[RMDB]
RNA sequence: GGGAACGACUCGAGUAGAGUCGAAAAAUCGCACCUUUAUGGCAUACGGAUCUGCUGACAUGUUUUACUACCCAGCUCACCAACAAGUGGCGUAGUACCAUUCGUCAAGACACUCAUCGCUACUUGCCCUGCAGUCCCGAUUCGUCGGGACUGCAGGAAAAGAAACAACAACAACAAC
Reactivity to 2A3 in 0.01 (KOAc 150mM, MgCl2 10mM, bicine 150mM(pH8.5), 24C), signal-to-noise 1, nucleotides 027 to 126: a000u130c040g000c010a060c020c010u050u120u020a060u080g010g000c000a000u010a050c060g060g020a020u020c010u000g090c020u030g000a000c000a050u140g000u000u060u000u000a010c020u070a020c000c000c000a020g050c090u060c000a090c030c000a070a080c000a040a110g070u000g010g020c050g010u060a000g000u000a100c010c010a050u090u000c050g130u040c020a090a000g080a040c060a000c030u010c040a050u110c060g000c030u000a040c000u040u010g000c000
Structure probing data (2A3) for a 177-nucleotide construct. High 2A3 reactivity points to a flexible backbone, as in loops and unpaired stretches. The RNA was probed in 150 mM KOAc, 10 mM MgCl2 and 150 mM bicine (pH 8.5) at 24 C.